[RMDB]
RNA sequence: GGGAACGACUCGAGUAGAGUCGAAAAGGGGUCUAGUCUGGAGUGGAGAACACAGCUUGGAUUUAUAUGCUGAAGCCUCCACGGCAUAUUGUCAGCUGUGCUCUCCACGAUGAAAGACUAGACGGAGGCACCCAAAACCACGAGGUUCGCCUCGUGGCCGUAUGUGAUUGUUCGCAAUCACAUACGGAAAAGAAACAACAACAACAAC
Reactivity to 2A3 in 0.01 (KOAc 150mM, MgCl2 10mM, bicine 150mM(pH8.5), 24C), signal-to-noise 1, nucleotides 027 to 156: g080g000g030g000u010c010u010a010g000u000c000u000g020g000a000g000u000g020g000a000g000a010a030c000a000c000a010g050c050u240u300g110g000a050u120u130u040a000u010a000u010g000c000u020g050a140a040g000c000c000u010c000c010a010c010g000g000c010a000u010a000u010u030g050u060c130a090g000c000u020g010u000g000c000u000c000u020c000c000a000c000g000a000u000g000a000a000a010g000a010c010u000a000g000a000c010g000g000a000g020g010c000a030c000c000c000a020a040a000a100c000c000a000c000g000a010g030g040u130u160c220g160c040c000u010c010g000u000g000g000
The data come from the RNA Mapping Database (RMDB), library RNAMAK. An RNA of 207 nucleotides, treated with 2A3 and read out base by base. For 2A3, 1,753 sequencing reads were counted. The reactions ran in a buffer of 150 mM KOAc, 10 mM MgCl2 and 150 mM bicine (pH 8.5), at 24 C.